[RMDB]
RNA sequence: GGGAACGACUCGAGUAGAGUCGAAAAACGCAUUGCAAGACCGCGAGGCUUGAAACCGACACCAUCAUCAGCUAGCGACAUACUACUUGUACCAGGUACGAAUGUCAUGUUUUAACCACCUGGUUAAUAUCAGCAUAGGAUUCGUCCUAUGCUGAUAAAAAGAAACAACAACAACAAC
Reactivity to DMS in 0.01 (KOAc 150mM, MgCl2 10mM, bicine 150mM(pH8.5), 24C), signal-to-noise 8, nucleotides 027 to 126: a080c100g010c080a060u010u020g010c040a070a080g010a100c050c030g000c160g000a180g010g010c040u010u000g000a070a060a080c100c030g010a070c060a030c040c020a030u010c030a030u000c030a040g020c040u000a060g000c050g010a040c050a040u000a120c050u000a040c080u000u000g010u010a050c030c010a030g000g010u000a070c150g010a060a040u000g000u000c190a070u010g010u000u000u000u000a060a120c120c070a080c040c040u010g000g000u000u010a070a130
Reactivity to 2A3 in 0.01 (KOAc 150mM, MgCl2 10mM, bicine 150mM(pH8.5), 24C), signal-to-noise 4, nucleotides 027 to 126: a000c050g030c040a080u050u210g010c020a070a020g050a140c020c000g020c050g050a040g020g040c030u050u080g020a120a020a020c040c030g050a020c000a010c040c010a030u040c010a010u020c020a020g030c030u050a010g030c020g050a000c020a040u090a080c020u020a010c010u030u080g020u030a030c000c020a000g000g040u050a030c050g070a110a030u080g100u130c040a070u120g110u050u120u030u050a030a030c040c020a010c000c010u030g000g000u000u030a030a010